[RMDB]
RNA sequence: GGGAACGACUCGAGUAGAGUCGAAAAAGUAGAAGAUGCUUGUUGCCAGGGUUAACAUGACCAAUUCCUUAAGUCUUGAAGGCUGAAAAGAGCUGUCUGGGUAAAGAUUGCACCUUACAAUGAUCCUUCUUAUCUCACCCUUGCCUAGUGGGAGAUAAUAAAUAAAUGCGUUCGCGCAUUUAUUUAUAAAAGAAACAACAACAACAAC
Reactivity to 2A3 in 0.01 (KOAc 150mM, MgCl2 10mM, bicine 150mM(pH8.5), 24C), signal-to-noise 2, nucleotides 027 to 156: a000g050u060a020g020a080a010g010a020u060g020c030u050u040g060u080u060g030c030c010a040g030g010g000u100u070a040a000c030a070u090g010a060c010c010a100a110u070u070c030c000u090u110a080a030g000u060c000u100u090g070a120a040g010g000c010u020g020a060a050a080a080g050a020g020c020u040g040u020c010u010g020g040g020u060a090a100a030g030a050u030u090g050c030a050c020c000u000u200a020c030a010a050u100g020a030u080c000c000u030u060c040u080u050a040u030c000u000c010a300c010c000c000u020u050g040c030c020u060a030g010u160g050g000g010a030g010a000u050a080
Reactivity to DMS in 0.01 (KOAc 150mM, MgCl2 10mM, bicine 150mM(pH8.5), 24C), signal-to-noise 2, nucleotides 027 to 156: a140g000u000a090g030a060a080g010a070u000g010c030u010u000g020u010u000g000c040c070a160g050g000g000u010u000a050a080c050a080u010g010a120c060c040a100a110u020u010c010c010u000u010a140a070g000u000c010u010u010g020a090a100g020g000c030u000g000a070a100a070a130g020a130g010c020u010g030u000c020u010g050g020g070u010a030a060a100g020a120u000u010g000c040a080c000c020u010u000a080c080a080a110u000g010a080u000c030c010u010u010c060u000u000a070u000c020u000c020a050c010c010c060u020u000g000c060c060u000a120g000u000g000g010g020a070g010a090u020a040
An RNA of 207 nucleotides, treated with 2A3 and DMS and read out base by base. Source: RMDB library OK3TST, as collected in RNAgym. The DMS profile rests on 3,776 reads. The 2A3 profile rests on 618 reads. For DMS the reverse transcriptase was MarathonRT. 2A3 adducts were read by reverse transcription with SuperScript II with manganese.